[RMDB]
RNA sequence: GGGAACGACUCGAGUAGAGUCGAAAAUACUGUAUGAUUCUAACUAUAUGGCAUUCUGGGAAAGAUAGAACCAUGGAGAUGGAAAGAUAUCUUAACAAGGUCUUUCUUUUGUUAUUUUGUCACUGGAGAGUAAAGUAGUAAAGAAAAAUGGAAUACACCUGAUGCAUCAUUUCGAUGAUGCAUCAGGAAAAGAAACAACAACAACAAC
Reactivity to 2A3 in 0.01 (KOAc 150mM, MgCl2 10mM, bicine 150mM(pH8.5), 24C), signal-to-noise 1, nucleotides 027 to 156: u030a000c050u050g040u050a020u050g060a070u090u170c070u090a080a000c010u000a060u040a060u200g010g020c020a040u070u000c060u160g100g000g000a020a020a020g010a020u090a000g040a070a020c020c020a050u040g040g000a020g000a010u050g000g050a130a030a000g040a090u210a000u090c000u000u010a040a040c050a010a010g070g010u080c000u000u030u040c000u030u030u000u000g020u000u050a180u040u090u040u030g020u000c010a000c170u050g050g020a100g000a020g090u060a000a130a000g040u070a030g000u010a110a110a000g100a000a070a010a040a010u270g050g020a050a110u220a020c000a010

Source: RMDB library OK3TST, as collected in RNAgym.
Structure probing data (2A3) for a 207-nucleotide construct.
The RNA was probed in 150 mM KOAc, 10 mM MgCl2 and 150 mM bicine (pH 8.5) at 24 C.
Values cover nucleotides 27 to 156.